[RMDB]
RNA sequence: GGGAACGACUCGAGUAGAGUCGAAAAGCAAAAGAUUAUCCAGGUGUAGCGGUGAAAUUCGUAGAGAUCUGGUGGAUAAUGAACCGGUGGCGAAGGCGAAAGAUAACCGCUGAAAAGAACAAUUGAACUCACUGGAUAGAUUCGUCUAUCCAGUGAGAAAAGAAACAACAACAACAAC
Reactivity to DMS in 0.01 (KOAc 150mM, MgCl2 10mM, bicine 150mM(pH8.5), 24C), signal-to-noise 4, nucleotides 027 to 126: g010c070a070a050a130a080g010a080u010u000a070u010c020c040a060g000g020u000g040u000a030g020c000g000g010u000g010a070a140a090u000u010c010g010u000a100g000a160g000a110u000c010u000g010g030u000g020g010a110u000a070a100u000g010a110a060c020c000g000g010u010g000g020c300g020a100a130g010g000c000g030a030a030a050g000a070u000a110a030c030c000g000c020u000g000a080a020a050a100g000a090a070c090a050a060u000u000g010a110a160
Reactivity to 2A3 in 0.01 (KOAc 150mM, MgCl2 10mM, bicine 150mM(pH8.5), 24C), signal-to-noise 1, nucleotides 027 to 126: g050c010a020a140a000a080g060a030u080u140a030u150c000c010a000g120g020u050g040u110a000g000c020g000g040u040g030a030a040a040u030u000c010g000u040a030g020a020g010a240u000c000u010g020g040u030g030g050a070u160a220a120u210g020a030a030c040c000g000g080u030g080g000c090g040a030a000g140g010c020g030a010a010a040g120a010u000a030a040c000c000g000c020u010g000a020a060a000a000g020a010a020c020a070a110u150u160g050a020a050
Source: RMDB library M2PK90, as collected in RNAgym. The record gives the reactivity of an RNA of 177 nucleotides to DMS and 2A3. DMS adducts were read by reverse transcription with MarathonRT.